[RMDB]
Notes: Chemical mapping of a 207-nucleotide RNA with 2A3 and DMS. For 2A3 the reverse transcriptase was SuperScript II with manganese.

RNA sequence: GGGAACGACUCGAGUAGAGUCGAAAACCAACCUUCGGGUUGGCCACCGCGUACUACUUAGACAUGUGCUACUUCAUGGAGAGAGCUCCCAAAUAGGAGCUCUCGCGAAACAUGAGUAGCGAAUCUAAGUAUCGCCCAUAUGGCCGUUCGCGGCCAAAUAAACUUUGGUAUUCGUACCAAAGUUUAUAAAAGAAACAACAACAACAAC
Reactivity to 2A3 in 0.01 (KOAc 150mM, MgCl2 10mM, bicine 150mM(pH8.5), 24C), signal-to-noise 4, nucleotides 027 to 156: c000c000a000a000c010c000u040u090c300g130g010g010u000u000g020g000c020c020a100c030c010g020c000g010u030a110c030u010a000c000u050u000a010g020a010c040a180u210g090u210g090c000u010a010c010u100u220c010a010u010g020g010a030g020a000g010a000g090c000u000c010c030c020a200a300a200u280a110g010g000a000g000c000u000c010u010c000g000c030g030a050a070a000c010a000u010g000a000g000u010a000g000c010g000a000a000u020c010u000a000a000g000u000a020u210c020g000c020c020c000a200u170a200u130g010g000c000c010g010u050u040c210g040c030g070g020c010c020a010a040
Reactivity to DMS in 0.01 (KOAc 150mM, MgCl2 10mM, bicine 150mM(pH8.5), 24C), signal-to-noise 2, nucleotides 027 to 156: c000c000a010a010c000c000u000u010c300g090g010g040u010u000g000g070c000c040a070c010c000g040c120g020u000a100c100u000a000c000u000u010a030g000a040c020a120u010g060u010g000c000u000a040c010u010u000c000a020u010g010g010a200g000a030g020a020g010c010u010c000c000c020a060a120a280u020a050g000g000a020g020c000u000c000u000c010g000c120g010a210a090a210c020a020u000g010a030g000u000a000g010c000g000a060a030u000c000u000a010a040g020u000a020u000c010g010c000c030c030a150u010a140u010g010g050c020c020g000u000u010c190g050c040g010g050c000c000a000a080
The RNA was probed in 150 mM KOAc, 10 mM MgCl2 and 150 mM bicine (pH 8.5) at 24 C. The data come from the RNA Mapping Database (RMDB), library RNAMAK.